This 177-nucleotide RNA was probed chemically with DMS and 2A3. Conditions: 150 mM KOAc, 10 mM MgCl2 and 150 mM bicine (pH 8.5), 24 C. Values cover nucleotides 27 to 126. 2A3 adducts were read by reverse transcription with SuperScript II with manganese.
RNA sequence: GGGAACGACUCGAGUAGAGUCGAAAAGAGGAAAGAAGGACGCGAGACGCAAACCUGUGAGUGGAAACCCGCUUUAUUCACUGGGGUCGACAGCUCUGGGGAGAAAAGGGAGGAUCGGCUGGGAAGAUCAUAACAAUUUGUUCGCAAAUUGUUAUGAAAAAGAAACAACAACAACAAC
Reactivity to DMS in 0.01 (KOAc 150mM, MgCl2 10mM, bicine 150mM(pH8.5), 24C), signal-to-noise 4, nucleotides 027 to 126: g010a080g000g000a060a060a050g010a090a080g000g000a070c100g020c070g010a060g020a070c060g010c070a080a090a120c050c020u010g010u000g010a030g030u010g010g000a060a060a100c020c020c030g010c130u000u000u000a060u010u000c100a060c090u010g010g000g010g010u000c060g000a140c150a100g000c040u000c030u000g000g000g010g010a070g000a020a050a050a070g000g000g010a050g000g000a060u010c090g010g010c060u000g010g000g010a040a060g010a080
Reactivity to 2A3 in 0.01 (KOAc 150mM, MgCl2 10mM, bicine 150mM(pH8.5), 24C), signal-to-noise 2, nucleotides 027 to 126: g040a010g030g030a010a040a050g020a050a020g040g000a010c040g030c040g060a050g030a030c030g010c080a070a090a080c000c020u080g020u060g070a040g000u030g000g040a040a050a040c010c030c000g060c050u120u140u080a170u120u090c040a040c110u100g000g000g020g010u050c030g030a020c030a040g020c000u010c030u050g000g020g000g000a060g030a030a100a000a000g010g000g000a030g000g010a050u060c060g000g030c020u030g020g000g000a030a030g020a080